Record summary
Structure probing data (2A3 and DMS) for a 207-nucleotide construct. Values cover nucleotides 27 to 156. 2A3 adducts were read by reverse transcription with SuperScript II with manganese. For 2A3, 869 sequencing reads were counted.
[RMDB]
RNA sequence: GGGAACGACUCGAGUAGAGUCGAAAAUUUCCAUCUGAAUGACGCCGGUGGGUUCAAAAUGUUGACAGUAAACCUGCCAUUUAGUUGGAAAAUGAUAUACGAGGUUAAACAACACUGGCCUACAAAUGAUAGAGACAUACCAGCAUUCAGCGUUAAGACUCUCAAUAAGCUUCGGCUUAUUGAGAGUAAAAGAAACAACAACAACAAC
Reactivity to 2A3 in 0.01 (KOAc 150mM, MgCl2 10mM, bicine 150mM(pH8.5), 24C), signal-to-noise 2, nucleotides 027 to 156: u020u000u020c000c000a010u000c010u010g060a010a000u020g050a050c060g040c030c010g000g020u010g050g130g090u080u150c110a100a110a070a130u220g170u190u100g010a020c050a030g020u190a050a120a020c000c000u010g000c010c020a010u000u000u000a020g010u010u010g000g020a000a030a050a090u170g060a000u040a030u050a170c080g060a040g050g020u100u150a060a140a000c020a070a000c010a040c070u030g020g000c010c000u040a070c060a060a160a080u170g070a040u090a100g140a000g000a000c020a030u140a040c000c050a000g050c010a060u040u200c040a030g040c010g040u030u000a090a030g020
Reactivity to DMS in 0.01 (KOAc 150mM, MgCl2 10mM, bicine 150mM(pH8.5), 24C), signal-to-noise 1, nucleotides 027 to 156: u000u000u040c020c010a080u000c020u010g000a010a030u000g040a060c110g020c080c090g100g040u000g030g010g020u010u000c060a060a070a240a090u010g050u000u000g030a150c050a230g040u000a120a040a090c050c000u000g020c020c010a020u000u000u000a030g000u020u000g000g020a010a010a050a080u000g000a090u000a170u000a150c050g010a060g030g040u000u000a060a140a130c000a050a060c030a040c090u030g020g000c040c030u000a110c030a240a050a060u000g020a080u010a030g010a120g040a060c200a090u010a040c050c010a070g080c030a110u000u000c030a050g000c050g000u020u000a090a140g010